Structure probing data (DMS and 2A3) for a 207-nucleotide construct. The reactions ran in a buffer of 150 mM KOAc, 10 mM MgCl2 and 150 mM bicine (pH 8.5), at 24 C. For DMS, 3,960 sequencing reads were counted. It was measured as part of the RMDB library OK3TST.
[RMDB]
RNA sequence: GGGAACGACUCGAGUAGAGUCGAAAAUCAGAGCCACGCAAGCCUCAGUCCCCAGAUUCAUCUCAAACCUCCCGUUAAUGAUUUAUGGGAGGAUUUCAUCUCCACAUGGACUGCGGAGACCUACUGUCCCUGUUUCUUGAGUGGAAAGAGAAGGUCAAUACUAAUGAGCGUUCGCGCUCAUUAGUAUAAAAGAAACAACAACAACAAC
Reactivity to DMS in 0.01 (KOAc 150mM, MgCl2 10mM, bicine 150mM(pH8.5), 24C), signal-to-noise 2, nucleotides 027 to 156: u000c050a080g010a120g000c010c020a010c050g000c060a080a090g010c050c020u010c040a110g010u000c020c000c010c060a120g010a120u000u000c020a130u000c010u000c030a110a080a170c010c000u010c010c000c010g040u000u000a080a090u010g000a180u000u020u000a040u030g020g000g010a040g010g020a010u000u000u000c050a110u000c010u000c000c020a050c030a140u010g000g010a080c050u000g020c010g000g010a030g000a090c010c040u010a130c100u000g010u020c010c010c010u000g050u000u000u000c020u000u000g010a170g030u000g000g010a080a070a090g020a130g020a100a080g030g010u000c020a100
Reactivity to 2A3 in 0.01 (KOAc 150mM, MgCl2 10mM, bicine 150mM(pH8.5), 24C), signal-to-noise 3, nucleotides 027 to 156: u090c030a030g040a010g080c010c000a060c060g050c040a050a060g030c000c010u010c000a010g010u030c000c000c030c010a000g010a040u120u080c050a130u090c120u050c120a100a090a130c000c010u010c020c010c000g000u050u020a160a020u240g180a050u110u180u110a030u040g000g000g030a000g000g000a010u010u040u060c000a010u010c000u010c060c010a050c030a090u110g020g020a010c020u010g000c030g040g000a060g020a050c010c010u070a040c020u050g020u060c010c010c000u000g010u000u080u020c030u030u040g040a080g010u020g020g040a010a140a010g030a000g010a020a090g040g010u030c020a030